[RMDB]
RNA sequence: GGGAACGACUCGAGUAGAGUCGAAAAGCUAGGCAUUUCGAUGCCUAGCGAGCGCAGAGUGUAUGCAUCUCUGAAUCACACAACAGCCGUGUCUAUGCGUGGGAGUAUCCCUCUUCGGAGGGAUAAAAUUUAAAGAUAGGUUCGCCUAUCUUUAAAUAAAAGAAACAACAACAACAAC
Reactivity to DMS in 0.01 (KOAc 150mM, MgCl2 10mM, bicine 150mM(pH8.5), 24C), signal-to-noise 9, nucleotides 027 to 126: g010c000u000a000g000g010c000a010u000u000u020c170g010a020u000g010c000c000u000a000g000c000g010a050g020c150g020c020a030g010a070g010u000g000u000a070u010g010c090a090u000c020u000c030u000g010a110a080u010c060a060c050a050c050a080a090c110a070g010c050c080g010u000g010u000c060u000a070u000g010c070g020u000g000g000g010a120g010u000a020u000c000c000c000u000c000u000u010c180g020g010a020g000g000g000a000u000a000a020a080
Reactivity to 2A3 in 0.01 (KOAc 150mM, MgCl2 10mM, bicine 150mM(pH8.5), 24C), signal-to-noise 5, nucleotides 027 to 126: g010c000u010a000g000g010c000a000u010u060u150c250g110a010u010g000c000c000u000a000g000c010g010a010g010c120g010c010a010g060a020g040u060g020u110a110u180g100c040a090u040c040u000c010u050g050a090a070u130c010a010c000a000c020a060a120c020a060g090c030c030g080u040g020u030c060u080a070u130g030c020g020u050g010g030g000a080g030u010a010u000c000c020c010u010c000u020u040c220g100g000a000g000g000g000a000u010a000a010a000